[RMDB]
RNA sequence: GGGAACGACUCGAGUAGAGUCGAAAAUUUGAUCCAGGCUCAGGACGAACGCUGACAGAGUACAUAACGCAUACAUGUCGAGCCGUAAGGCCAUUCAGCGUACACGAGCAGAGGACGGGUGAGUAACAAUAUUUUAAUAUUUCGAUAUUAAAGUAUUAAAAGAAACAACAACAACAAC
Reactivity to 2A3 in 0.01 (KOAc 150mM, MgCl2 10mM, bicine 150mM(pH8.5), 24C), signal-to-noise 9, nucleotides 027 to 126: u120u040u130g050a040u020c010c010a040g120g000c000u010c030a030g060g070a050c070g050a120a030c010g010c010u000g000a000c020a080g140a030g110u160a010c020a040u150a130a070c120g080c150a040u070a150c050a030u090g050u060c040g040a040g020c010c000g010u060a050a090g010g000c010c010a020u040u030c010a000g010c000g020u020a030c030a020c050g010a010g000c020a010g070a040g080g010a010c040g030g000g040u080g030a070g040u080a060a050c020
Reactivity to DMS in 0.01 (KOAc 150mM, MgCl2 10mM, bicine 150mM(pH8.5), 24C), signal-to-noise 9, nucleotides 027 to 126: u020u030u020g010a120u010c000c010a150g000g010c010u010c020a080g010g010a150c170g010a100a020c010g010c000u000g000a020c300a080g010a120g010u050a020c040a030u010a100a100c300g020c210a200u030a070c140a040u000g010u000c050g010a160g030c010c000g000u050a080a110g010g010c000c050a120u010u000c010a010g000c010g010u000a060c090a120c070g000a040g010c010a070g010a090g000g000a040c050g010g000g010u010g000a090g010u010a080a090c100